[RMDB]
The data come from the RNA Mapping Database (RMDB), library TTRDEL. The record gives the reactivity of an RNA of 177 nucleotides to 2A3 and DMS. For 2A3 the reverse transcriptase was SuperScript II with manganese. Reactivities are given for positions 27 through 126. For DMS the reverse transcriptase was MarathonRT.
RNA sequence: GGGAACGACUCGAGUAGAGUCGAAAAGAUAUGGAUAUUACGAUGCUAGACCCACCGAUGAAAUCGGAAACGAUGGAGGUGCUAGCUAAGUAAUAUCCUAAGUCGAGGUUCGGGUUCGCCCGAACAACUAUUAUGUCCAGUUCGCUGGACAUAAUAGAAAAGAAACAACAACAACAAC
Reactivity to 2A3 in 0.01 (KOAc 150mM, MgCl2 10mM, bicine 150mM(pH8.5), 24C), signal-to-noise 2, nucleotides 027 to 126: g010a000u060a020u150g000g000a000u000a000u010u010a000c020g000a020u280g000c010u010a060g080a200c080c040c030a030c040c000g160a300u130g080a080a080a020u030c010g000g050a090a070a020c040g030a030u080g030g010a030g000g000u070g070c010u000a000g000c000u010a010a000g000u000a000a000u000a000u000c000c000u000a030a010g010u010c010g040a080g000g180u000u000c010g020g000g010u030u070c250g030c050c000c000g000a000a000c000a000a000
Reactivity to DMS in 0.01 (KOAc 150mM, MgCl2 10mM, bicine 150mM(pH8.5), 24C), signal-to-noise 6, nucleotides 027 to 126: g010a030u010a300u010g000g000a010u000a020u000u000a010c010g000a300u020g000c000u000a010g000a180c140c180c020a040c020c000g000a120u010g010a070a140a100u000c010g000g000a090a070a150c000g010a010u000g010g000a080g010g020u000g000c010u000a000g000c000u010a080a260g000u000a000a010u000a010u000c000c000u000a020a060g010u000c000g010a160g010g010u000u000c000g010g000g010u000u010c250g010c000c000c000g010a000a000c010a050a150